[RMDB]
RNA sequence: GGGAACGACUCGAGUAGAGUCGAAAAAGACCAUAUUGAAGACCAACGCUCCCAACGUCUCGGAAUUUUUCCAGAGCAAUUCGCUGAGGGUCAAGGUGAUGGUGGACAACACCGAUCCGGCCGAGCCCGUGUACGAUUGGGUAGAGCUGACCGUGCCGUAGUCAAGUACAUUCGUGUACUUGACUACAAAAGAAACAACAACAACAAC
Reactivity to 2A3 in 0.01 (KOAc 150mM, MgCl2 10mM, bicine 150mM(pH8.5), 24C), signal-to-noise 4, nucleotides 027 to 156: a010g100a050c030c040a050u110a160u160u190g140a130a030g020a050c050c010a050a060c050g010c020u010c010c000c000a000a010c010g020u000c000u010c010g070g110a110a130u110u130u070u130u160c070c030a050g010a020g090c050a050a170u150u200c120g010c030u060g040a060g030g010g080u030c090a100a100g020g010u060g000a020u300g020g020u020g020g010a100c100a250a040c010a130c010c020g000a010u000c010c000g020g020c010c000g040a030g010c000c000c030g020u020g020u070a030c040g130a300u020u050g030g010g030u080a090g020a000g090c060u070g020a050c030c060g090u100g030c040c060
Reactivity to DMS in 0.01 (KOAc 150mM, MgCl2 10mM, bicine 150mM(pH8.5), 24C), signal-to-noise 2, nucleotides 027 to 156: a050g000a170c040c040a140u010a130u000u000g010a130a080g010a040c020c010a020a160c100g000c000u000c030c000c000a010a050c040g000u000c080u020c020g010g010a050a100u000u010u000u010u010c010c000a140g000a110g020c060a100a120u010u000c050g020c030u000g000a040g030g010g040u000c030a050a300g010g020u000g020a220u010g000g000u000g010g000a170c110a060a150c030a040c030c010g020a040u000c030c020g010g010c010c000g020a300g020c060c000c000g020u000g020u000a040c060g020a120u000u000g080g000g040u000a070g010a140g010c020u010g010a020c020c030g020u000g000c020c090

Chemical mapping of a 207-nucleotide RNA with 2A3 and DMS.
DMS (dimethyl sulfate) methylates the pairing face of unpaired adenines and cytosines.
Conditions: 150 mM KOAc, 10 mM MgCl2 and 150 mM bicine (pH 8.5), 24 C.
For 2A3, 2,022 sequencing reads were counted.
The data come from the RNA Mapping Database (RMDB), library OK3TST.